[RMDB]
RNA sequence: GGGAACGACUCGAGUAGAGUCGAAAAGAUAUGGAAAUAGGUACAGAGCUUUGAUCUCGGAAACGAGGGAGCUCGUACUAUUUCCUAAGUCAAAAGCGAACGUUGUGGUUCGCCACAACGUUCGCAACAAUAUACGAGACUUCGGUCUCGUAUAUUGAAAAGAAACAACAACAACAAC
Reactivity to DMS in 0.01 (KOAc 150mM, MgCl2 10mM, bicine 150mM(pH8.5), 24C), signal-to-noise 3, nucleotides 027 to 126: g000a040u000a300u010g000g000a010a010a010u000a010g020g000u010a010c020a160g010a010g020c000u000u000u010g000a060u000c010u000c000g000g000a120a090a220c010g000a010g000g000g010a010g020c000u000c000g020u000a010c000u000a010u000u000u000c000c000u000a020a080g010u010c040a060a080a140a180g010c010g010a020a010c000g010u000u000g020u000g020g010u000u000c170g010c000c000a000c010a020a000c010g020u010u000c010g030c020a010a040
Reactivity to 2A3 in 0.01 (KOAc 150mM, MgCl2 10mM, bicine 150mM(pH8.5), 24C), signal-to-noise 3, nucleotides 027 to 126: g010a010u080a030u110g020g020a020a010a010u030a060g180g070u100a040c260a300g040a010g030c020u300u300u200g100a100u130c010u020c020g040g000a090a060a040c000g000a000g000g020g000a010g000c000u010c000g000u020a000c000u000a000u000u010u000c000c000u010a060a010g050u020c020a030a000a060a150g000c010g020a000a000c000g020u050u000g030u020g060g050u100u160c280g080c120c010a000c030a000a000c010g000u020u000c000g010c000a000a010
The data come from the RNA Mapping Database (RMDB), library TTRDEL. Structure probing data (DMS and 2A3) for a 177-nucleotide construct. The 2A3 profile rests on 5,076 reads. High DMS reactivity at an A or C suggests that its Watson-Crick edge is free. The RNA was probed in 150 mM KOAc, 10 mM MgCl2 and 150 mM bicine (pH 8.5) at 24 C.